[RMDB]
RNA sequence: GGGAACGACUCGAGUAGAGUCGAAAACUGUCGUUCUUCGGAACGACAGAAAGAACGCGUGGGUGACGCAAGGAGGAGCGUGUGGGACGCGACAAACCCAAAAAAGCGUUCGGUUCGCCGAACGCAAUCAACUAUCAAGGUUCGCCUUGAUAGUUGAAAAAGAAACAACAACAACAAC
Reactivity to DMS in 0.01 (KOAc 150mM, MgCl2 10mM, bicine 150mM(pH8.5), 24C), signal-to-noise 6, nucleotides 027 to 126: c000u000g010u000c000g020u000u000c000u010u010c190g030g020a010a010c000g000a000c010a000g010a030a060a090g010a110a120c060g000c050g020u000g010g010g010u000g010a070c040g000c030a080a090g000g000a250g010g000a110g000c040g000u000g020u000g010g010g010a080c050g020c020g000a070c100a040a080a090c000c000c010a000a040a070a060a080a110g000c000g000u000u000c000g000g010u000u000c180g020c000c000g000a010a020c000g010c000a030a030
Reactivity to 2A3 in 0.01 (KOAc 150mM, MgCl2 10mM, bicine 150mM(pH8.5), 24C), signal-to-noise 4, nucleotides 027 to 126: c010u000g010u010c000g010u010u000c010u030u030c170g100g000a000a000c000g000a000c000a000g000a000a010a000g020a060a010c030g010c010g030u060g010g140g060u100g040a020c020g010c060a060a050g090g060a050g030g030a080g030c020g000u060g010u110g030g050g030a010c020g010c000g020a020c050a020a060a060c000c000c000a050a110a000a010a030a020g000c000g000u000u010c010g000g000u030u030c190g020c040c000g010a000a000c000g000c000a000a030
This 177-nucleotide RNA was probed chemically with DMS and 2A3. DMS (dimethyl sulfate) methylates the pairing face of unpaired adenines and cytosines. The 2A3 profile rests on 15,711 reads. The data come from the RNA Mapping Database (RMDB), library M2PK50.